[RMDB]
RNA sequence: GGGAACGACUCGAGUAGAGUCGAAAAGGCUUAAUGCUUCAGUCCUUCGGGCAAUGAAGCCCUUCGAAGCUCGCAAGGCGGACAAGGUUAGUAGCGAAGCGCACUAUAGCGACGGCCAUCGUUGUAGAAGAUGGUAUUUAUUCGUAAAUACCAUCUUAAAAGAAACAACAACAACAAC
Reactivity to 2A3 in 0.01 (KOAc 150mM, MgCl2 10mM, bicine 150mM(pH8.5), 24C), signal-to-noise 9, nucleotides 027 to 126: g030g000c020u070u080a120a010u190g010c000u030u040c060a050g030u090c010c000u030u050c080g040g000g030c040a050a120u200g060a090a020g040c010c010c000u010u010c020g030a030a010g000c010u010c020g080c050a030a020g010g000c000g000g000a010c010a010a020g020g060u130u100a030g050u090a010g130c020g040a070a000g040c040g010c080a030c040u050a020u070a130g000c010g040a050c030g040g010c020c000a050u070c060g020u020u030g020u030a040g010
Reactivity to DMS in 0.01 (KOAc 150mM, MgCl2 10mM, bicine 150mM(pH8.5), 24C), signal-to-noise 9, nucleotides 027 to 126: g010g010c030u000u010a090a130u020g010c010u000u000c080a080g010u010c020c010u000u010c130g010g000g010c080a160a090u020g010a090a070g000c090c020c010u000u000c040g010a300a170g010c000u000c030g020c250a110a300g000g010c030g000g000a300c250a030a030g000g010u000u000a080g010u000a070g010c040g000a060a050g010c080g020c090a120c030u000a050u010a040g000c010g010a120c160g000g010c060c050a120u010c070g000u000u010g010u000a060g010